[RMDB]
RNA sequence: GGGAACGACUCGAGUAGAGUCGAAAAGCUGGGCAUGAUGGUUGGUACCCUGGAAGAGGGUCGCGCCUCGGCCAUCCGUCUGAACAGCGCCGAAACCAAGCGCCAACAGGCGGCCAUCGGUCUGGAACGGAAUGAUAGCAUUCGUGCUAUCAUUCCGAAAAGAAACAACAACAACAAC
Reactivity to 2A3 in 0.01 (KOAc 150mM, MgCl2 10mM, bicine 150mM(pH8.5), 24C), signal-to-noise 1, nucleotides 027 to 126: g040c010u040g000g000g000c000a070u140g040a010u050g020g070u110u080g120g050u140a090c000c020c000u030g070g150a090a030g070a020g070g000g000u050c020g000c010g050c020c000u000c010g000g020c020c000a010u000c000c000g030u000c010u020g010a080a010c000a020g000c000g000c010c010g080a160a020a010c070c030a050a010g020c000g000c000c020a000a040c010a030g030g010c000g010g000c030c000a040u040c030g000g010u000c030u030g040g040a090a030
Reactivity to DMS in 0.01 (KOAc 150mM, MgCl2 10mM, bicine 150mM(pH8.5), 24C), signal-to-noise 3, nucleotides 027 to 126: g030c000u000g000g020g000c010a050u000g040a010u000g000g010u010u000g030g030u020a070c020c040c050u000g010g030a110a070g000a020g000g010g010u010c290g000c270g000c020c020u000c060g010g010c000c020a050u010c000c000g010u000c010u010g010a030a110c300a100g000c000g000c010c050g000a080a110a090c150c140a080a180g020c000g000c020c030a020a300c070a030g000g020c000g000g010c100c020a030u000c010g030g000u010c020u000g000g000a180a210